This 177-nucleotide RNA was probed chemically with 2A3 and DMS. DMS adducts were read by reverse transcription with MarathonRT. The reactions ran in a buffer of 150 mM KOAc, 10 mM MgCl2 and 150 mM bicine (pH 8.5), at 24 C.
RNA sequence: GGGAACGACUCGAGUAGAGUCGAAAAGAUAUGGAGGAUUGUCGAGGUCCGACGAAUUCGGAAACGAACUAUCGGACUACCCACCGACGUUUCCUCCUAAGUCAAAAGACGAUGUUCGCAUCGUCAACGUUCGAAUAGACUUCGGUCUAUUCGAACGAAAAGAAACAACAACAACAAC
Reactivity to 2A3 in 0.01 (KOAc 150mM, MgCl2 10mM, bicine 150mM(pH8.5), 24C), signal-to-noise 2, nucleotides 027 to 126: g040a000u050a000u210g000g000a000g040g000a020u070u070g000u000c020g000a040g040g000u070c060c010g000a000c050g130a060a300u110u010c000g000g070a050a040a040c010g010a030a010c070u090a100u050c000g000g000a020c020u050a080c060c070c020a040c020c000g000a000c040g140u020u110u010c000c000u000c000c010u010a050a010g020u020c020a000a020a230a000g000a000c000g000a000u030g030u060u150c300g010c140a000u010c000g030u040c010a000a000
Reactivity to DMS in 0.01 (KOAc 150mM, MgCl2 10mM, bicine 150mM(pH8.5), 24C), signal-to-noise 3, nucleotides 027 to 126: g000a010u000a300u020g020g020a020g000g000a020u000u000g000u000c000g000a160g010g000u000c010c000g050a020c120g020a120a140u000u000c010g010g000a070a050a130c000g010a020a020c150u010a230u000c000g010g010a000c020u000a030c050c010c100a300c060c020g000a000c000g010u000u000u000c010c000u040c000c010u000a010a060g010u010c020a130a020a070a110g000a000c010g040a000u000g000u000u040c210g000c010a010u000c000g000u010c000a040a080